Source information: Chemical mapping of a 177-nucleotide RNA with 2A3 and DMS. For 2A3 the reverse transcriptase was SuperScript II with manganese. The 2A3 profile rests on 1,500 reads. DMS adducts were read by reverse transcription with MarathonRT. The RNA was probed in 150 mM KOAc, 10 mM MgCl2 and 150 mM bicine (pH 8.5) at 24 C. Reactivities are given for positions 27 through 126.
RNA sequence: GGGAACGACUCGAGUAGAGUCGAAAAGAUAUGGAAGUUCCACUGCGCUUGGACCUCGGAAACGAGCUAGCGUAAAGUGGAGACUUCCUAAGUCAAACCUCCCGAAACGUUCGCGUUUCGGGAGGAACUUUUUAAGGAGGUUCGCCUCCUUAAAAAGAAAAGAAACAACAACAACAAC
Reactivity to 2A3 in 0.01 (KOAc 150mM, MgCl2 10mM, bicine 150mM(pH8.5), 24C), signal-to-noise 1, nucleotides 027 to 126: g010a000u050a070u240g030g010a000a010g000u000u020c000c000a000c020u070g030c060g010c010u040u190g030g160a300c000c030u010c000g010g050a060a090a070c000g010a020g010c000u000a000g010c000g010u030a300a300a000g010u000g000g010a110g030a000c000u000u000c000c000u000a110a000g010u030c040a070a060a240c030c000u000c000c000c010g020a000a000a000c020g020u180u140c300g000c010g200u000u010u020c000g000g020g000a020g010g000a000a000
Reactivity to DMS in 0.01 (KOAc 150mM, MgCl2 10mM, bicine 150mM(pH8.5), 24C), signal-to-noise 2, nucleotides 027 to 126: g010a040u000a300u030g000g000a000a020g000u000u000c000c000a010c010u000g010c010g020c010u000u000g020g010a130c300c000u000c020g020g010a070a080a220c000g010a010g000c060u000a020g000c000g000u010a030a050a050g020u000g000g010a010g010a010c000u000u000c010c000u010a030a050g010u010c040a040a180a220c010c020u020c000c000c000g000a000a020a010c000g020u000u010c170g000c020g030u000u020u010c010g000g000g010a000g000g000a000a000